This 177-nucleotide RNA was probed chemically with 2A3 and DMS. Conditions: 150 mM KOAc, 10 mM MgCl2 and 150 mM bicine (pH 8.5), 24 C. DMS adducts were read by reverse transcription with MarathonRT. For DMS, 1,571 sequencing reads were counted. It was measured as part of the RMDB library OK2TRN. Reactivities are given for positions 27 through 126.
RNA sequence: GGGAACGACUCGAGUAGAGUCGAAAAACGCCGGAGUCGACGUGAUCAUCACUUCCGGCGGCACCGGUAUCUCGCCCACCGAUACCACGCCCGAACACACGGUCGCCGUGCUGGACUACGUCAUUCCGCAGCUGAAUGGAUUCGUCCAUUCAGCUGCAAAAGAAACAACAACAACAAC
Reactivity to 2A3 in 0.01 (KOAc 150mM, MgCl2 10mM, bicine 150mM(pH8.5), 24C), signal-to-noise 2, nucleotides 027 to 126: a000c040g010c010c000g020g010a030g040u120c060g040a020c020g050u090g170a160u120c110a040u080c020a040c050u110u020c030c000g010g000c000g000g000c010a040c010c030g000g050u030a040u040c070u040c050g050c000c000c010a020c000c020g000a000u010a070c000c030a010c040g050c000c000c040g110a150a050c060a010c010a000c120g000g050u060c040g070c100c010g060u040g000c030u070g020g020a050c060u100a030c050g030u000c050a110u030u080c060c040
Reactivity to DMS in 0.01 (KOAc 150mM, MgCl2 10mM, bicine 150mM(pH8.5), 24C), signal-to-noise 2, nucleotides 027 to 126: a110c110g020c000c010g010g000a020g040u010c090g000a020c060g000u000g000a090u000c150a240u000c050a080c040u000u020c010c010g000g000c000g020g010c090a030c100c050g010g000u000a040u000c040u010c100g000c030c010c010a070c110c100g010a070u000a080c020c020a210c130g010c030c040c020g010a000a100c150a080c130a090c100g010g000u000c070g030c050c020g020u000g030c060u000g000g010a060c080u000a070c110g000u030c070a090u000u000c060c070